This 177-nucleotide RNA was probed chemically with 2A3.
The RNA was probed in 150 mM KOAc, 10 mM MgCl2 and 150 mM bicine (pH 8.5) at 24 C.
[RMDB]
RNA sequence: GGGAACGACUCGAGUAGAGUCGAAAAAGGGUGACUUAUACUUGUGAGAGUAUUUGUUGGUAAUGGGAAUAAGUCCCAAAGGCAAGCCACAUAGCAGAAGAUACGUUCUCAUUGAGGCAGCUACACACCUCAGGUCGAUGUUCGCAUCGACCUGAGGAAAAGAAACAACAACAACAAC
Reactivity to 2A3 in 0.01 (KOAc 150mM, MgCl2 10mM, bicine 150mM(pH8.5), 24C), signal-to-noise 1, nucleotides 027 to 126: a010g140g000g030u100g080a070c090u100u000a000u030a140c000u070u040g040u100g100a300g000a030g000u000a110u000u060u040g060u010u020g000g060u010a180a250u090g020g030g090a090a000u150a100a080g170u120c000c040c020a010a000a000g090g000c030a030a120g030c000c040a040c010a070u110a040g050c020a000g000a080a000g170a030u090a050c090g050u080u100c000u050c000a140u000u110g000a030g000g000c020a000g100c000u090a030c050a000c000a000